Structure probing data (2A3 and DMS) for a 207-nucleotide construct. The reactions ran in a buffer of 150 mM KOAc, 10 mM MgCl2 and 150 mM bicine (pH 8.5), at 24 C. For DMS the reverse transcriptase was MarathonRT. 2A3 adducts were read by reverse transcription with SuperScript II with manganese.
RNA sequence: GGGAACGACUCGAGUAGAGUCGAAAACCAUGUUUCGACAUGGAUCGCGGGGUCGAAAGUCUCGUCAUCGAUCGUGGAACUACUCCUGAAGCCUCCACGGGAGCCACGGGAGACGAGGCUUUCGACGGAGGCACCCAAAAAUAGGUUUCGACCUAAAAUCCGAUAGAAAUUUCGAUUUCUAUCGGAUAAAAGAAACAACAACAACAAC
Reactivity to 2A3 in 0.01 (KOAc 150mM, MgCl2 10mM, bicine 150mM(pH8.5), 24C), signal-to-noise 3, nucleotides 027 to 156: c000c000a000u010g020u010u180u060c160g050a010c010a020u040g040g040a120u200c110g010c170g070g000g000g010u020c000g000a000a000a000g010u000c000u000c000g020u010c010a170u300c060g020a020u010c010g000u000g000g040a140a050c070u190a090c010u300c000c010u010g010a050a000g010c000c020u000c000c000a010c000g010g000g000a010g000c000c000a000c000g000g000g000a110g000a000c000g000a000g000g000c000u000u000u000c000g000a000c000g000g000a010g000g000c000a030c000c010c000a050a130a020a020a010u090a040g000g060u070u150u090c150g080a040c000c000u080a080a050a130
Reactivity to DMS in 0.01 (KOAc 150mM, MgCl2 10mM, bicine 150mM(pH8.5), 24C), signal-to-noise 1, nucleotides 027 to 156: c000c000a040u000g000u000u000u000c070g010a090c000a050u010g020g010a100u010c060g000c100g040g000g010g030u010c030g020a040a010a040g010u010c010u000c010g070u010c010a220u010c230g000a010u000c010g020u010g010g010a250a160c150u010a300c010u040c010c010u000g030a050a160g000c000c020u000c010c000a300c020g000g030g010a010g010c030c010a070c000g000g020g000a090g030a070c020g010a070g020g010c010u010u000u000c000g010a010c060g000g010a020g020g040c030a070c020c000c010a000a070a040a120a210u000a060g000g000u000u000u010c140g000a060c000c010u000a060a070a160